[RMDB]
RNA sequence: GGGAACGACUCGAGUAGAGUCGAAAAGAUAUGGACGGCAUACUUCGACGAUCUCGGAAACGAGGGAGAAGUUAUGGCCGUCCUAAGUCAAAAGGUAUCUUGAUUGCUUCGGCAAUCAAGAUACCAAUCAAGUGAUCCACUUCGGUGGAUCACUUGAAAAAGAAACAACAACAACAAC
Reactivity to DMS in 0.01 (KOAc 150mM, MgCl2 10mM, bicine 150mM(pH8.5), 24C), signal-to-noise 1, nucleotides 027 to 126: g000a040u020a300u000g000g010a000c000g030g010c010a010u010a010c000u010u000c000g000a050c240g020a030u020c000u000c010g000g000a130a130a220c000g010a040g050g000g000a010g010a020a000g020u010u020a000u000g010g010c000c000g020u000c000c010u000a000a050g000u010c020a080a090a110a110g000g010u000a000u000c010u000u000g000a000u000u000g000c000u000u000c300g030g000c000a000a020u000c000a000a040g000a000u000a040c000c000a010a010
Structure probing data (DMS) for a 177-nucleotide construct.
It was measured as part of the RMDB library TTRDEL.
Values cover nucleotides 27 to 126.